[RMDB]
The record gives the reactivity of an RNA of 207 nucleotides to DMS and 2A3. DMS adducts were read by reverse transcription with MarathonRT. In probing experiments dimethyl sulfate is read out at A N1 and C N3, which are open when not base-paired. 2A3 adducts were read by reverse transcription with SuperScript II with manganese. The DMS profile rests on 19,014 reads. The reactions ran in a buffer of 150 mM KOAc, 10 mM MgCl2 and 150 mM bicine (pH 8.5), at 24 C. For 2A3, 8,926 sequencing reads were counted. It was measured as part of the RMDB library M2RFPK.
RNA sequence: GGGAACGACUCGAGUAGAGUCGAAAAGGAGGAUUCCGCUCCUUUGCGCUUUUUUUUCGGAUUAGGCGUGGAGGCGAAAGUCACCCUGCUCGCAUCGCAAGUUCGUGCUUGCGACUUACACGUAGGGAAAAACCCAUUGACUUCGGUCAAUGGGUAAACAUUAGGUAAGAUUCGUCUUACCUAAUGUAAAAGAAACAACAACAACAAC
Reactivity to DMS in 0.01 (KOAc 150mM, MgCl2 10mM, bicine 150mM(pH8.5), 24C), signal-to-noise 4, nucleotides 027 to 156: g020g010a080g010g010a300u000u000c030c030g020c020u000c010c000u000u000u000g010c010g020c010u000u000u000u000u000u000u000u000c220g020g010a060u000u000a030g020g000c010g010u000g000g010a030g010g010c050g000a070a040a050g000u000c030a140c010c000c000u000g010c030u000c030g000c300a110u000c010g000c000a010a020g020u000u010c230g000u010g010c010u000u000g000c000g010a030c030u000u000a100c060a080c090g020u000a030g000g000g010a030a040a050a110a080c000c000c000a000u000u010g000a030c000u000u010c300g050g010u000c000a020a010u000g000g010g010u000a000a020
Reactivity to 2A3 in 0.01 (KOAc 150mM, MgCl2 10mM, bicine 150mM(pH8.5), 24C), signal-to-noise 8, nucleotides 027 to 156: g050g030a020g060g040a110u100u020c040c010g020c060u030c010c000u000u010u020g020c010g010c020u070u030u020u010u010u010u020u110c190g100g010a050u070u030a040g000g010c010g010u010g010g010a010g010g010c050g050a100a050a020g060u090c040a060c020c010c000u000g010c010u030c070g030c040a040u010c010g000c000a010a010g010u160u300c190g170u300g080c000u000u000g000c000g000a010c000u060u110a050c070a010c100g030u020a010g000g020g110a080a040a010a000a010c000c000c000a000u000u000g000a010c010u030u060c210g060g010u000c000a000a000u000g000g010g000u000a000a000